[RMDB]
RNA sequence: GGGAACGACUCGAGUAGAGUCGAAAACGGCGCAAGGUAAGGUCUAAGAAGAAAUAGACCUUACCCAAUGUUAACCAGAUCCGCUUAGCGCCGAUAAAGCGGACAAACCCAAAUGAUUAGGGGAGAACUAAAACCAUGCGUUCGCGCAUGGUUUUAGAAAAGAAACAACAACAACAAC
Reactivity to 2A3 in 0.01 (KOAc 150mM, MgCl2 10mM, bicine 150mM(pH8.5), 24C), signal-to-noise 2, nucleotides 027 to 126: c000g000g000c010g010c060a040a110g080g000u040a000a000g000g000u000c000u000a040a070g140a180a070g080a090a290a000u010a040g000a000c020c010u000u000a040c000c000c000a020a000u110g020u140u100a020a000c000c000a000g010a240u000c000c000g000c030u000u000a070g000c010g010c000c000g010a000u120a060a040a000g000c000g000g000a000c030a000a070a020c000c000c010a000a000a070u300g080a180u180u240a240g010g010g000g000a040g010a090a000
Reactivity to DMS in 0.01 (KOAc 150mM, MgCl2 10mM, bicine 150mM(pH8.5), 24C), signal-to-noise 1, nucleotides 027 to 126: c000g010g000c000g030c010a120a090g000g030u000a000a050g000g000u010c000u000a020a070g020a250a200g010a220a060a120u000a030g000a000c010c000u000u000a000c000c000c250a000a070u010g000u070u020a100a050c030c000a140g000a140u000c010c000g000c000u000u010a110g000c000g000c000c000g030a130u030a000a030a010g010c010g000g000a030c300a020a100a120c000c000c000a000a100a260u000g000a110u100u070a090g000g000g040g020a150g000a030a120